[RMDB]
RNA sequence: GGGAACGACUCGAGUAGAGUCGAAAAGUGACCACCGACCGCAGUCAGCGGCUGAUGCUGCGCUUUGUACCCGUUGACCGGGAGGACAAUACCUACUCAUACAAAGUUCGAUACACCUUGGCUGUGGGCGACAACAGAGUGCUGGAUAUGGCCAGCAACUCUUACACGUUUUCGAACGUGUAAGAGUAAAAGAAACAACAACAACAAC
Reactivity to 2A3 in 0.01 (KOAc 150mM, MgCl2 10mM, bicine 150mM(pH8.5), 24C), signal-to-noise 7, nucleotides 027 to 156: g090u040g090a080c000c000a020c020c020g030a020c000c020g000c000a010g000u000c010a010g020c120g120g010c120u070g040a120u130g030c090u060g000c010g020c020u010u000u000g000u020a040c000c000c020g030u160u210g130a130c150c020g000g010g000a020g000g010a020c090a100a140u140a130c000c010u060a080c020u080c140a040u020a040c010a010a020a000g000u020u070c030g010a000u020a150c020a030c010c010u020u000g000g000c000u000g000u010g000g000g000c020g040a030c030a130a010c030a040g120a030g090u070g000c010u010g000g020a060u120a160u300g120g030c000c000a000g000c000a000
Reactivity to DMS in 0.01 (KOAc 150mM, MgCl2 10mM, bicine 150mM(pH8.5), 24C), signal-to-noise 3, nucleotides 027 to 156: g010u010g010a090c070c010a160c050c020g040a030c010c030g040c010a120g020u000c100a090g010c060g020g000c050u000g030a070u000g030c050u000g040c100g030c010u000u020u010g020u010a060c010c050c040g020u000u000g000a160c150c000g020g030g020a120g000g010a090c000a110a200u000a140c060c020u010a120c080u010c090a210u000a070c020a020a040a050g000u000u000c030g010a160u000a120c130a080c030c010u000u000g010g000c010u010g030u000g020g010g010c030g040a070c050a100a090c060a170g010a050g010u000g000c000u010g020g020a150u010a110u010g040g010c000c000a020g000c010a070